[RMDB]
This 177-nucleotide RNA was probed chemically with 2A3 and DMS.
RNA sequence: GGGAACGACUCGAGUAGAGUCGAAAAGAUGGGAACGACUCGAGUAGAGUCGAAAUUAAGAAUCGGAAGCAUGAGAACCGAGAUAGACAUGCAAUCGCGAACUAGAGGAGAAACUCCUCUAGAAAUAGCGAUUAUUAAUGUUCGCAUUAAUAAUCGCAAAAGAAACAACAACAACAAC
Reactivity to 2A3 in 0.01 (KOAc 150mM, MgCl2 10mM, bicine 150mM(pH8.5), 24C), signal-to-noise 6, nucleotides 027 to 126: g080a050u180g000g010g030a060a070c010g000a010c000u010c000g030a040g090u180a020g040a000g000u000c000g010a000a010a000u190u080a100a010g050a060a060u070c000g000g010a050a020g000c010a000u030g010a030g050a100a030c020c030g010a010g070a170u090a030g120a020c010a000u020g000c000a000a080u120c080g030c010g120a040a010c010u000a000g000a000g000g010a000g100a020a110a060c120u000c000c000u000c000u000a000g000a000a020a000u130a000
Reactivity to DMS in 0.01 (KOAc 150mM, MgCl2 10mM, bicine 150mM(pH8.5), 24C), signal-to-noise 4, nucleotides 027 to 126: g000a060u050g020g010g000a080a080c010g000a000c000u000c000g020a120g010u030a100g000a010g000u020c000g000a010a030a090u040u030a080a100g010a170a090u020c010g000g000a110a120g010c030a000u010g010a130g000a060a130c040c020g010a060g000a080u010a100g000a070c030a010u000g000c020a120a100u010c070g000c080g040a110a150c010u000a000g000a010g020g000a040g000a080a100a100c150u000c000c000u000c000u000a000g000a050a080a070u030a100

It was measured as part of the RMDB library OK1LIB. For 2A3 the reverse transcriptase was SuperScript II with manganese. The 2A3 profile rests on 8,966 reads.